[RMDB]
RNA sequence: GGGAACGACUCGAGUAGAGUCGAAAAGAGGCUGAGGCAGGAGAAUGGCGUAAACCCGGGAGGCAGAGCUUGCAGUGAGCCAAGAUCGCGCCACUGUACUCCAGCCUGGGGUGACAGAGCGAGACUCGAGCGACCUGAUCUUCGGAUCAGGUCGCUCAAAAGAAACAACAACAACAAC
Reactivity to DMS in 0.01 (KOAc 150mM, MgCl2 10mM, bicine 150mM(pH8.5), 24C), signal-to-noise 1, nucleotides 027 to 126: g000a140g010g000c190u100g010a140g000g060c060a000g000g000a040g000a070a140u000g000g020c010g020u000a060a300a170c000c000c060g000g000g000a000g050g060c000a060g000a020g000c300u000u040g000c030a000g000u130g000a280g000c010c000a050a180g020a180u110c080g050c160g000c020c000a010c000u000g000u000a010c000u000c070c040a080g000c050c040u000g060g010g000g010u000g010a140c270a120g060a050g050c000g000a100g000a020c000u000c040
Reactivity to 2A3 in 0.01 (KOAc 150mM, MgCl2 10mM, bicine 150mM(pH8.5), 24C), signal-to-noise 1, nucleotides 027 to 126: g230a080g030g000c030u030g010a100g000g110c120a050g000g020a000g100a100a180u240g080g030c000g070u020a030a170a190c000c050c000g000g070g020a050g000g000c020a040g000a000g040c030u050u060g040c000a030g000u070g070a030g000c000c070a040a000g100a180u280c240g000c100g010c070c000a000c000u000g000u000a100c000u000c000c050a010g050c000c020u000g000g000g000g070u040g000a030c030a130g100a000g100c030g050a020g000a100c000u000c000